Notes: The record gives the reactivity of an RNA of 170 nucleotides to DMS and 2A3. The data come from the RNA Mapping Database (RMDB), library 15KLIB. Values cover nucleotides 27 to 129. For DMS the reverse transcriptase was MarathonRT. The RNA was probed in 150 mM KOAc, 10 mM MgCl2 and 150 mM bicine (pH 8.5) at 24 C.
[RMDB]
RNA sequence: GGGAACGACUCGAGUAGAGUCGAAAACAACUGUUAUCUUGCCACUGCAUUGUUAACACUCCAACAAAUAGAGUUGAAGUUUAAUCCACCUGCUCUAUAAAGGGCUGGUGAAGCUGCUAACUUUUGUCGACCGAUAUGUUCGCAUAUCGGAAAAGAAACAACAACAACAAC
Reactivity to DMS in 0.01 (KOAc 150mM, MgCl2 10mM, bicine 150mM(pH8.5), 24C), signal-to-noise 9, nucleotides 027 to 129: c070a090a050c140u000g020u000u000a050u050c050u000u000g000c040c180a110c160u040g010c050a050u020u010g000u000u000a030a040c020a040c020u030c040c040a050a040c110a020a130a100u050a090g030a050g030u010u040g020a000a080g020u010u020u000a100a100u030c170c020a000c020c000u030g020c020u040c000u030a090u020a100a110a100g060g020g040c020u000g040g010u000g020a060a070g030c040u030g000c080u020a000a010c040u000u030u030u040g050u020c070g000a150
Reactivity to 2A3 in 0.01 (KOAc 150mM, MgCl2 10mM, bicine 150mM(pH8.5), 24C), signal-to-noise 9, nucleotides 027 to 129: c020a010a020c050u040g020u050u030a100u060c050u050u160g030c030c050a140c090u100g010c030a050u050u080g040u050u070a050a020c030a020c050u010c010c000a020a030c030a040a210a120u290a060g130a010g030u020u050g030a030a000g010u030u050u120a050a050u070c030c000a000c000c000u010g020c000u000c000u030a130u120a180a200a110g000g000g000c010u010g010g000u000g000a010a010g020c020u040g020c020u030a020a020c000u020u020u050u080g130u090c030g040a050